An RNA of 177 nucleotides, treated with DMS and 2A3 and read out base by base. The data come from the RNA Mapping Database (RMDB), library OK2TST. Conditions: 150 mM KOAc, 10 mM MgCl2 and 150 mM bicine (pH 8.5), 24 C. The DMS profile rests on 7,756 reads. Reactivities are given for positions 27 through 126. 2A3 adducts were read by reverse transcription with SuperScript II with manganese.

RNA sequence: GGGAACGACUCGAGUAGAGUCGAAAACGUUUUGAGGGAAGUAGAUUCGAGGGCACUUCUGAAAACAAAGACAGGAAGUGGUUCGGAUAUUGGUACGUUUGUCUUGGCGAAGUGUGGAUACAUCGGAAUUUAAUCCCUACUUCGGUAGGGAUUAAAUAAAAGAAACAACAACAACAAC
Reactivity to DMS in 0.01 (KOAc 150mM, MgCl2 10mM, bicine 150mM(pH8.5), 24C), signal-to-noise 6, nucleotides 027 to 126: c090g020u010u000u000u000g020a120g000g010g000a070a080g020u010a060g000a080u000u010c040g020a050g010g010g010c010a030c020u010u010c000u000g010a110a110a090a110c190a080a080a120g010a070c100a160g010g010a030a030g030u000g010g000u000u010c030g010g010a050u000a060u010u010g010g000u000a040c090g000u000u010u010g000u000c030u010u010g000g010c070g010a060a040g010u000g020u010g010g010a110u000a070c120a070u000c060g010g000a130
Reactivity to 2A3 in 0.01 (KOAc 150mM, MgCl2 10mM, bicine 150mM(pH8.5), 24C), signal-to-noise 2, nucleotides 027 to 126: c000g010u020u030u090u160g090a040g000g020g060a050a020g040u090a060g020a070u010u040c020g010a020g050g080g040c000a000c030u000u000c000u010g020a030a100a060a040c100a070a080a000g130a020c070a080g010g070a030a000g050u040g050g200u040u040c000g000g010a000u020a060u150u080g040g030u070a030c040g020u030u000u060g040u050c020u030u060g030g000c030g020a040a040g030u010g020u080g070g030a030u050a070c050a090u090c020g000g000a000